Structure probing data (DMS and 2A3) for a 207-nucleotide construct. 2A3 adducts were read by reverse transcription with SuperScript II with manganese. The reactions ran in a buffer of 150 mM KOAc, 10 mM MgCl2 and 150 mM bicine (pH 8.5), at 24 C. For DMS, 2,632 sequencing reads were counted. In probing experiments dimethyl sulfate is read out at A N1 and C N3, which are open when not base-paired. It was measured as part of the RMDB library OK3TST.
RNA sequence: GGGAACGACUCGAGUAGAGUCGAAAAUAUCAAUCAAACCAAUAUAAGUCUAUCUACAGUAGGGGUUCUCUGCCAUGUCUGCCAUGGCUACCUAUUGGAAUCACUUAGAGAGCUUUAAAAAUACUGGUGCCUAAGUCCCACUCCGCAAAGAUCAAGACAUGCUAUAGGUAUUCGUACCUAUAGCAUGAAAAGAAACAACAACAACAAC
Reactivity to DMS in 0.01 (KOAc 150mM, MgCl2 10mM, bicine 150mM(pH8.5), 24C), signal-to-noise 1, nucleotides 027 to 156: u000a090u010c030a050a120u040c070a120a060a150c060c030a090a070u010a100u020a050a090g010u000c020u000a060u010c000u000a090c010a030g040u000a050g000g070g000g000u010u000c020u000c160u000g030c000c010a020u000g010u000c110u010g000c100c040a060u000g020g020c020u000a040c020c000u000a050u000u010g000g020a130a140u000c030a030c010u010u000a070g000a180g000a050g040c020u010u000u010a040a060a060a110a080u000a080c040u010g000g040u000g010c010c030u010a030a110g030u000c010c000c040a090c070u000c030c080g010c050a040a050a100g010a070u000c030a030a160g020a190
Reactivity to 2A3 in 0.01 (KOAc 150mM, MgCl2 10mM, bicine 150mM(pH8.5), 24C), signal-to-noise 3, nucleotides 027 to 156: u120a020u050c030a040a040u040c040a030a120a130c050c020a150a010u110a070u040a150a020g030u000c020u030a080u000c010u030a060c020a030g030u020a010g030g030g030g000u160u050c100u040c050u070g010c010c000a010u020g070u070c110u200g070c080c000a000u000g010g000c000u020a030c000c000u020a060u010u050g040g020a040a040u060c040a030c080u070u090a010g010a010g000a000g060c000u080u160u240a130a130a000a020a010u070a100c040u030g010g000u030g000c020c020u030a050a040g020u020c020c010c010a030c020u030c020c020g010c100a040a090a040g040a090u140c040a060a000g120a070